[RMDB]
RNA sequence: GGGAACGACUCGAGUAGAGUCGAAAAAAAUCGAAGGCUACCGCAACGUGCUGUGCCUGCCCGUGCGUGUCAGCGCGGGUGGAAUAGUCAGCGCGGUUCGUCGCACCUUCCAACGGAUUUACUCCGAUAGGAUGUACGAAUUCGUUCGUACAUCCUAAAAAGAAACAACAACAACAAC
Reactivity to DMS in 0.01 (KOAc 150mM, MgCl2 10mM, bicine 150mM(pH8.5), 24C), signal-to-noise 5, nucleotides 027 to 126: a050a060a040u000c110g010a020a030g000g010c070u000a130c300c020g010c110a070a050c010g010u000g000c000u000g000u000g000c080c010u010g010c010c000c010g020u000g000c010g010u010g030u030c250a190g010c010g020c020g010g000g030u010g000g010a100a100u000a150g000u010c010a020g010c020g010c020g000g000u010u010c080g020u010c090g010c150a130c020c020u010u000c010c140a070a110c040g000g010a040u000u000u010a100c110u000c010c000g010a220
Reactivity to 2A3 in 0.01 (KOAc 150mM, MgCl2 10mM, bicine 150mM(pH8.5), 24C), signal-to-noise 3, nucleotides 027 to 126: a000a000a000u170c040g010a020a000g030g000c040u060a030c010c040g030c040a020a010c030g000u010g000c010u010g010u010g020c000c010u000g030c030c010c000g000u010g000c010g010u280g250u280c150a080g000c000g010c000g010g010g000u020g000g010a020a030u080a020g240u150c000a010g000c010g000c010g000g030u050u080c030g050u040c030g010c020a020c010c000u000u000c020c010a090a030c010g020g000a010u040u050u190a090c080u020c020c000g000a010
Annotation
Conditions: 150 mM KOAc, 10 mM MgCl2 and 150 mM bicine (pH 8.5), 24 C. Structure probing data (DMS and 2A3) for a 177-nucleotide construct. Values cover nucleotides 27 to 126.